An RNA of 207 nucleotides, treated with 2A3 and read out base by base. Reactivities are given for positions 27 through 156. The reactions ran in a buffer of 150 mM KOAc, 10 mM MgCl2 and 150 mM bicine (pH 8.5), at 24 C. It was measured as part of the RMDB library OK3TST. Values are in units of 0.01, from 0 to 300, in steps of 10. For 2A3, 597 sequencing reads were counted.
RNA sequence: GGGAACGACUCGAGUAGAGUCGAAAACUGCAGGUCAACGGGGCAUCUUCAGAUCAGCUAUUGCAGAAGAAAGGUCAGCCAAGCGCUCUGGGCCUGUCCGACUGUAUAUAGGAGCUUCUGAUUUCAACCAGAAGCUAACUCUCUCCGAAACAAUGAGGGUAAUGAGGUGAUUCGUCACCUCAUUACCAAAAGAAACAACAACAACAAC
Reactivity to 2A3 in 0.01 (KOAc 150mM, MgCl2 10mM, bicine 150mM(pH8.5), 24C), signal-to-noise 2, nucleotides 027 to 156: c010u040g000c020a010g080g000u070c040a130a050c100g000g000g000g030c010a060u090c010u090u090c030a020g000a300u020c030a040g070c040u070a090u130u140g050c070a070g000a130a030g010a030a160a000g050g000u100c010a010g040c070c000a110a020g070c030g000c060u000c010u030g020g010g000c000c000u010g000u010c010c010g050a040c020u050g060u090a060u000a010u000a190g140g000a020g000c010u000u000c010u000g040a130u190u230u290c040a070a040c020c000a000g000a000a000g020c000u010a010a010c000u010c000u040c020u030c020c040g040a080a100a030c080a060a040u140g020a070g040